[RMDB]
RNA sequence: GGGAACGACUCGAGUAGAGUCGAAAAAUUAAUGUCACAUAUCGUUCGUUUCACUGGGCUACUACUACUCAACGCAUUUAUUGUGCGCGGUAGACCGGUGGGCGGCAUUCAACAUUAAGUCAGCUCGCUACGAAUGAGAGUUCGCUCUCAUUCGUAGAAAAGAAACAACAACAACAAC
Reactivity to 2A3 in 0.01 (KOAc 150mM, MgCl2 10mM, bicine 150mM(pH8.5), 24C), signal-to-noise 2, nucleotides 027 to 126: a000u040u020a020a000u000g010u020c110a040c050a140u150a030u080c110g070u270u040c020g030u000u270u300c010a000c000u000g000g000g070c000u050a030c000u040a020c010u040a040c030u070c110a070a030c010g000c020a000u030u120u160a240u300u300g010u000g000c000g000c000g000g000u010a000g010a020c000c010g000g010u000g000g010g020c000g000g010c000a020u050u080c020a030a030c010a010u020u010a030a030g070u060c030a020g010c040u030c070g020
Reactivity to DMS in 0.01 (KOAc 150mM, MgCl2 10mM, bicine 150mM(pH8.5), 24C), signal-to-noise 1, nucleotides 027 to 126: a080u020u020a010a030u000g000u020c110a150c230a070u000a010u000c100g070u000u000c010g020u020u000u030c010a010c000u010g000g020g010c010u000a010c010u020a130c180u010a120c250u000c090a090a080c020g000c000a000u000u000u000a060u080u000g020u010g000c020g000c060g010g000u000a020g020a050c010c000g040g020u000g000g010g010c010g000g020c000a030u010u000c160a030a020c020a010u000u000a010a020g010u000c080a140g010c040u000c030g000
Structure probing data (2A3 and DMS) for a 177-nucleotide construct. The DMS profile rests on 1,181 reads. Values cover nucleotides 27 to 126.